[RMDB]
RNA sequence: GGGAACGACUCGAGUAGAGUCGAAAAGAUUAUCCGUCAUGAUUAAUGGUCCUCCGCUGCGGCAACCGCUGGAUUUUCCGCAGGCAGAUCGGUGUUGUUAUCACCCAGCAUAAUGUGGUCGAGGAUCCAGACUGUUACGAUUCGUCGUAACAGUCUGAAAAGAAACAACAACAACAAC
Reactivity to 2A3 in 0.01 (KOAc 150mM, MgCl2 10mM, bicine 150mM(pH8.5), 24C), signal-to-noise 3, nucleotides 027 to 126: g040a090u180u190a030u110c020c020g110u070c090a090u150g100a120u110u300a190a050u160g040g000u010c010c000u000c020c030g030c020u000g010c000g000g030c010a020a040c030c060g020c140u070g060g030a070u050u030u050u020c030c000g050c050a050g100g000c040a020g030a110u120c030g050g020u030g020u070u070g060u060u020a120u130c000a010c000c030c000a010g000c010a030u110a200a040u200g050u030g040g030u030c020g020a030g020g000a000u000c000
Reactivity to DMS in 0.01 (KOAc 150mM, MgCl2 10mM, bicine 150mM(pH8.5), 24C), signal-to-noise 5, nucleotides 027 to 126: g000a120u010u010a070u000c020c040g020u010c100a100u020g010a080u010u000a070a070u010g010g010u010c000c010u000c020c120g020c010u000g000c020g000g010c300a070a060c110c090g010c040u000g010g000a170u000u000u010u000c010c010g000c050a050g010g000c070a060g000a060u000c050g010g010u000g000u000u000g010u000u000a080u000c080a070c080c020c030a050g000c040a100u010a080a110u000g020u000g000g010u000c270g000a050g000g000a040u000c020